[RMDB]
RNA sequence: GGGAACGACUCGAGUAGAGUCGAAAACAUCGCGUUACAAGAGGCGGGGUGGGUCGUUCGGAAUGAUGUGACCUGGGUCAAACCGAAUCCGAUGCCGCAAUCAGUGAAAGACCGAUUGAACACCACGACGGAACAGAUAUUCCAUCUGACGCCACAGUAGGUAAUAGGGAUUCGUCCCUAUUACCUAAAAAGAAACAACAACAACAAC
Reactivity to 2A3 in 0.01 (KOAc 150mM, MgCl2 10mM, bicine 150mM(pH8.5), 24C), signal-to-noise 5, nucleotides 027 to 156: c050a040u070c040g030c060g090u070u130a070c060a100a070g040a050g080g030c040g010g000g040g010u140g050g030g000u040c070g030u010u010c020g000g040a040a030u040g030a060u080g090u100g210a140c040c070u110g120g030g000u010c020a040a020a010c030c020g030a010a020u060c040c040g050a060u060g100c000c010g000c040a020a070u060c020a020g050u010g180a120a070a010g080a040c030c030g000a040u020u070g060a090a010c010a020c100c020a040c070g100a020c060g070g010a060a030c010a010g040a020u040a080u200u100c040c020a000u020c020u020g040a050c050g030c010c020a070c030a060g090
Reactivity to DMS in 0.01 (KOAc 150mM, MgCl2 10mM, bicine 150mM(pH8.5), 24C), signal-to-noise 3, nucleotides 027 to 156: c040a090u020c050g030c040g020u000u000a140c080a110a120g050a160g010g010c030g020g010g020g040u010g000g020g020u010c030g000u000u000c020g040g020a050a200u000g000a040u000g020u000g020a080c080c090u010g030g020g000u000c030a020a050a300c020c020g000a050a120u010c060c010g030a080u000g020c030c050g020c050a030a050u000c020a090g000u010g000a130a100a160g000a050c010c010g000a060u000u000g020a090a110c050a020c020c000a080c050g010a060c010g000g010a060a080c020a110g010a100u000a300u000u000c060c060a090u010c000u000g010a080c030g000c020c020a070c040a170g000